[RMDB]
RNA sequence: GGGAACGACUCGAGUAGAGUCGAAAAUGUGGGAUUUCUAAGACAACUAGGAUGUUGGCUUAGAAGCAGCCACUCAUUUAAAGAGUGCGUAAUAGCUCACUAGUCAAGAGAUCCUGCGCCGAAGAUGUGUAUCUAUCAAGUUCGCUUGAUAGAUACAAAAAGAAACAACAACAACAAC
Reactivity to DMS in 0.01 (KOAc 150mM, MgCl2 10mM, bicine 150mM(pH8.5), 24C), signal-to-noise 6, nucleotides 027 to 126: u010g030u000g010g010g010a050u010u000u000c010u000a100a090g010a100c230a050a040c020u000a090g010g010a090u000g020u010u000g000g000c000u010u000a090g000a090a100g020c150a110g010c050c010a010c020u020c020a050u010u000u010a080a100a130g000a080g010u000g000c130g010u000a050a110u010a140g010c010u000c050a060c040u000a040g000u000c080a090a050g000a050g000a030u000c010c010u000g020c020g000c040c020g010a090a090g010a120u010g020
Reactivity to 2A3 in 0.01 (KOAc 150mM, MgCl2 10mM, bicine 150mM(pH8.5), 24C), signal-to-noise 5, nucleotides 027 to 126: u180g010u010g000g000g020a010u000u010u010c020u040a060a080g060a100c030a040a020c060u050a040g130g060a130u110g070u090u060g040g000c010u040u050a050g030a080a000g010c010a000g020c020c000a000c010u070c000a090u090u220u170a120a150a020g000a000g010u030g020c060g030u040a070a130u040a150g000c000u000c020a050c020u020a000g020u020c040a050a000g000a000g000a020u010c000c010u000g000c020g000c010c030g070a090a020g130a140u180g050
Conditions: 150 mM KOAc, 10 mM MgCl2 and 150 mM bicine (pH 8.5), 24 C.
Structure probing data (DMS and 2A3) for a 177-nucleotide construct.
The DMS profile rests on 7,214 reads.
Source: RMDB library OK2TRN, as collected in RNAgym.